[RMDB]
Source: RMDB library OK2TRN, as collected in RNAgym. Structure probing data (DMS and 2A3) for a 177-nucleotide construct. Conditions: 150 mM KOAc, 10 mM MgCl2 and 150 mM bicine (pH 8.5), 24 C. DMS (dimethyl sulfate) methylates the pairing face of unpaired adenines and cytosines. For DMS the reverse transcriptase was MarathonRT.

RNA sequence: GGGAACGACUCGAGUAGAGUCGAAAACGAUAUAUUAUAGCGCCGAUGCAUUAUAGCGCAUCGAUAUCGCGCGAUAUUAAUCGUAGCCGGCAUUAGCGCGCAUGCAUGCCGAUUACGCGCGCGGCUAGUUAGUGUCUAUUUUCGAAUAGACACUAACAAAAGAAACAACAACAACAAC
Reactivity to DMS in 0.01 (KOAc 150mM, MgCl2 10mM, bicine 150mM(pH8.5), 24C), signal-to-noise 9, nucleotides 027 to 126: c040g000a100u010a100u000a070u010u010a140u000a080g020c010g020c130c030g010a020u000g000c010a110u000u010a150u010a160g020c210g010c000a010u000c000g010a110u010a050u010c140g000c010g010c010g010a090u000a080u000u010a070a070u010c010g010u000a070g010c050c010g010g020c030a040u000u010a090g010c010g010c150g020c140a080u010g020c070a070u000g000c040c030g010a070u000u000a030c050g010c020g020c010g020c010g010g010c060u000a090
Reactivity to 2A3 in 0.01 (KOAc 150mM, MgCl2 10mM, bicine 150mM(pH8.5), 24C), signal-to-noise 9, nucleotides 027 to 126: c010g010a010u060a020u030a060u300u180a120u110a090g020c020g020c030c010g010a010u020g000c020a030u100u160a160u300a280g130c080g000c040a000u000c010g010a020u030a050u170c030g000c000g000c020g010a000u020a040u070u150a060a040u090c010g010u010a010g030c020c010g020g000c050a070u090u160a080g010c030g000c030g020c070a040u200g010c010a020u050g010c020c010g010a000u030u050a030c050g000c000g000c000g000c000g010g010c010u020a040